[RMDB]
RNA sequence: GGGAACGACUCGAGUAGAGUCGAAAAGAUAUGGAGCGACCAUAGCCGAUAAGCUGGAUUCGGAAACGAAUCCCAGCUUUUGACGGCUUAAGUCGCUCCUAAGUCAAAAGGGACGUUCGCGUCCCAACAGCUGGGAUAUGUUCGCAUAUCCCAGCUGAAAAGAAACAACAACAACAAC
Reactivity to DMS in 0.01 (KOAc 150mM, MgCl2 10mM, bicine 150mM(pH8.5), 24C), signal-to-noise 1, nucleotides 027 to 126: g010a030u010a300u020g010g050a050g050c000g000a000c020c030a300u000a020g030c000c000g020a150u000a020a000g000c000u000g020g000a050u000u000c030g000g000a100a100a260c000g000a000a020u000c220c030c060a030g010c000u000u020u000u000g080a180c110g020g000c000u060u000a120a120g020u000c010g000c000u050c000c000u000a010a060g010u000c020a020a160a150a110g000g050g020a010c010g020u010u000c250g030c010g000u010c000c000c010a000a080